Chemical mapping of a 177-nucleotide RNA with 2A3 and DMS. For DMS the reverse transcriptase was MarathonRT. The RNA was probed in 150 mM KOAc, 10 mM MgCl2 and 150 mM bicine (pH 8.5) at 24 C. The data come from the RNA Mapping Database (RMDB), library OK2TST. The 2A3 profile rests on 6,437 reads.

RNA sequence: GGGAACGACUCGAGUAGAGUCGAAAAAAAGCAUGGCUGUCCUCCCAGUUUGGCAUGGGUGAGUAUAGCAUUAAACCAUUGGAUAACAUUCAACACUUAUAAUAUGUUACCAGGCCAAGUGAAUGACCGUUAUUCACUAGUUCGCUAGUGAAUAACGAAAAGAAACAACAACAACAAC
Reactivity to 2A3 in 0.01 (KOAc 150mM, MgCl2 10mM, bicine 150mM(pH8.5), 24C), signal-to-noise 6, nucleotides 027 to 126: a000a000a000g180c120a140u210g060g000c010u010g000u020c000c010u000c010c010c010a010g000u040u050u040g030g000c030a030u000g000g000g010u050g020a060g020u160a020u030a070g000c040a050u130u210a060a060a020c030c030a080u030u090g020g020a080u040a030a030c010a020u030u080c070a110a070c050a040c140u170u110a110u050a240a120u130a030u110g010u000u010a040c000c030a040g040g020c020c010a030a020g080u080g170a130a110u130g050a060c040
Reactivity to DMS in 0.01 (KOAc 150mM, MgCl2 10mM, bicine 150mM(pH8.5), 24C), signal-to-noise 5, nucleotides 027 to 126: a060a040a080g030c160a080u010g010g010c020u010g000u000c030c030u010c020c020c030a080g000u010u000u000g010g010c090a130u000g010g000g000u000g020a110g010u010a050u010a040g010c040a060u010u000a080a120a140c070c050a110u020u000g010g000a110u000a010a020c010a290u000u010c160a090a090c170a060c190u010u010a070u000a070a080u000a030u000g010u000u000a030c010c020a080g010g010c010c020a020a080g020u000g020a080a050u010g000a140c180